[RMDB]
RNA sequence: GGGAACGACUCGAGUAGAGUCGAAAAUCACCAGAUGCUGCAUCACCUGAUCACUGAUGGCUCAACGGUAUCCGGCGGUACAACUGAGUACUUGUAGCUGCCUUUUGAGCGGGUUGGCUGCAAUCCGAAAAGAGGACACACUUCGGUGUGUCCUCAAGUUAAAACCCUAGUUCGCUAGGGUUUUAACAAAAGAAACAACAACAACAAC
Reactivity to 2A3 in 0.01 (KOAc 150mM, MgCl2 10mM, bicine 150mM(pH8.5), 24C), signal-to-noise 2, nucleotides 027 to 156: u070c010a020c000c000a000g010a020u020g000c020u020g020c000a020u010c020a030c000c010u010g010a030u020c010a000c020u030g000a020u040g050g020c040u020c080a060a040c050g050g000u030a020u020c010c040g030g020c020g050g030u030a050c020a090a050c140u140g050a040g100u060a050c020u020u040g010u000a000g000c020u010g010c010c010u010u050u070u100g040a040g010c070g040g010g000u170u260g050g000c000u000g020c010a000a120u090c040c020g050a030a010a030a080g010a010g000g010a000c010a000c000a000c010u030u070c180g050g000u020g000u000g000u020c000c000u010c000a010a000
Reactivity to DMS in 0.01 (KOAc 150mM, MgCl2 10mM, bicine 150mM(pH8.5), 24C), signal-to-noise 4, nucleotides 027 to 156: u000c010a110c030c010a080g020a030u000g020c020u000g030c020a120u000c080a050c010c030u000g020a100u000c070a150c190u020g000a090u010g010g010c030u000c020a090a090c070g030g020u000a020u000c020c010g020g050c010g020g030u000a060c100a060a100c050u000g010a110g030u010a050c060u000u000g020u000a060g010c010u000g030c020c000u000u000u020u010g000a080g030c050g020g010g010u000u010g050g010c060u000g000c010a060a090u000c030c020g000a090a080a150a200g000a030g000g000a030c000a010c000a000c010u000u000c300g030g030u000g020u000g010u000c000c000u000c000a000a040

This 207-nucleotide RNA was probed chemically with 2A3 and DMS. For 2A3, 2,294 sequencing reads were counted. The reactions ran in a buffer of 150 mM KOAc, 10 mM MgCl2 and 150 mM bicine (pH 8.5), at 24 C.